Structure probing data (2A3) for a 207-nucleotide construct.

RNA sequence: GGGAACGACUCGAGUAGAGUCGAAAACAGGAAACUGGUUAAUCGUUUUCCUUGGUAGUAUAGCGGAAACCAUAAAUAAGAAGAACUCUAAGUGCUUGAGUAGAGUUAAAAUAAUUACACAGGCAAUUAAGGUACUCCACGUUCGCGUGGAGUACAAGAUGUACGGACAGUUCGCUGUCCGUACAUCAAAAGAAACAACAACAACAAC
Reactivity to 2A3 in 0.01 (KOAc 150mM, MgCl2 10mM, bicine 150mM(pH8.5), 24C), signal-to-noise 2, nucleotides 027 to 156: c040a000g060g070a020a010a060c040u110g040g040u170u120a120a160u190c090g020u030u030u080u090c000c010u020u030g030g000u020a040g020u010a090u090a180g070c040g010g040a040a020a020c030c000a020u080a160a100a010u130a190a010g100a040a000g000a040a010c000u030c010u010a000a050g050u040g110c030u050u000g010a000g020u020a000g030a000g040u070u120a010a020a020a020u070a010a000u120u140a020c050a000c000a020g000g000c000a020a020u050u130a160a020g100g000u000a010c000u000c000c020a000c000g000u030u060c220g040c000g090u000g000g040a000g000u010a000c000a000a000
For 2A3 the reverse transcriptase was SuperScript II with manganese.